This 177-nucleotide RNA was probed chemically with DMS and 2A3. High DMS reactivity at an A or C suggests that its Watson-Crick edge is free. For DMS the reverse transcriptase was MarathonRT. Values cover nucleotides 27 to 126. It was measured as part of the RMDB library OK2TRN.
RNA sequence: GGGAACGACUCGAGUAGAGUCGAAAAUUAUCCAAACUUCUGAAACCCUAAAUCUCUGAAAACUGAAGUGAUACUUGUAACCCUGGCACUAUAAUUCACUUAGUGGUAAAGCUGAUCUGAGCUCACAGCUUAUCACACUUUUCGAAGUGUGAUAAGCAAAAGAAACAACAACAACAAC
Reactivity to DMS in 0.01 (KOAc 150mM, MgCl2 10mM, bicine 150mM(pH8.5), 24C), signal-to-noise 3, nucleotides 027 to 126: u000u010a090u000c010c060a110a130a080c060u000u010c020u000g000a130a070a150c040c010c020u000a070a060a110u000c040u000c060u000g000a090a050a090a130c070u010g000a030a030g010u020g020a080u010a060c100u010u010g000u010a040a100c020c000c020u000g000g020c010a070c040u000a060u000a060a060u000u000c050a090c090u000u010a030g030u000g010g000u000a070a060a070g000c040u010g000a080u010c090u010g010a080g010c080u000c090a070c110a160
Reactivity to 2A3 in 0.01 (KOAc 150mM, MgCl2 10mM, bicine 150mM(pH8.5), 24C), signal-to-noise 2, nucleotides 027 to 126: u030u010a010u000c000c000a050a060a070c000u070u000c010u090g090a210a090a080c000c000c020u050a160a130a120u070c060u020c040u080g080a080a040a060a050c050u040g000a070a010g010u000g060a030u030a090c040u050u070g030u080a060a080c000c000c000u010g090g030c040a000c030u050a060u040a210a120u130u090c010a020c070u080u040a000g030u020g110g000u070a150a080a010g010c020u020g020a120u070c050u060g030a010g050c020u000c020a070c010a010